The record gives the reactivity of an RNA of 207 nucleotides to 2A3.
[RMDB]
RNA sequence: GGGAACGACUCGAGUAGAGUCGAAAAGCAUAGAAUCUCUGCAUUAUACAGAAUCUUAACUGUCUCUACAUUACAGUAUAAUCCACAUCUGCAUCUUUGCAGCUUGCUAUUAUACAUCUUUGGUUUGCUGUGAAAGAGCUGUCAGAGAAUGAGCUCAGCAGCUAUAGUGAUUCGUCACUAUAGCUGCAAAAGAAACAACAACAACAAC
Reactivity to 2A3 in 0.01 (KOAc 150mM, MgCl2 10mM, bicine 150mM(pH8.5), 24C), signal-to-noise 4, nucleotides 027 to 156: g040c040a080u100a180g050a220a140u030c040u000c020u080g000c030a070u100u070a060u190a130c040a020g050a120a100u050c060u110u110a160a090c020u050g010u040c010u000c020u120a090c060a130u110u070a010c030a020g020u020a040u030a160a030u040c060c010a040c010a060u020c000u020g020c010a060u050c150u060u170u120g020c000a000g030c050u030u050g000c020u040a060u230u070a100u140a120c090a200u140c120u080u080u070g010g020u010u020u010g000c010u000g020u020g100a100a090a020g010a010g010c030u040g110u150c000a000g020a010g000a100a080u110g050a020g020c030u080c140a020

The reactions ran in a buffer of 150 mM KOAc, 10 mM MgCl2 and 150 mM bicine (pH 8.5), at 24 C.